[RMDB]
RNA sequence: GGGAACGACUCGAGUAGAGUCGAAAAUUUAAUGUCUUCGAGGUUAAUGCCGCCAAAGGUCGGCUCCAGCGCUGCGACCACAUUGAUAAAUUUGUCCGGAUCAAGCUCAUCGACUUCAAUGUCAAACGCCGGUAGGAGGAUUCGUCCUCCUACCGGCAAAAGAAACAACAACAACAAC
Reactivity to 2A3 in 0.01 (KOAc 150mM, MgCl2 10mM, bicine 150mM(pH8.5), 24C), signal-to-noise 1, nucleotides 027 to 126: u060u060u060a090a090u030g100u050c040u060u030c160g000a010g000g110u130u090a080a010u100g060c010c010g070c000c000a220a220a000g000g010u150c000g030g000c060u000c010c000a000g010c050g020c000u130g030c000g010a040c040c030a000c000a000u000u090g100a030u060a220a070a190u200u100u080g060u060c030c000g040g000a060u150c040a070a000g070c010u000c010a170u000c000g070a070c000u130u060c040a130a080u080g020u030c010a120a060a060c060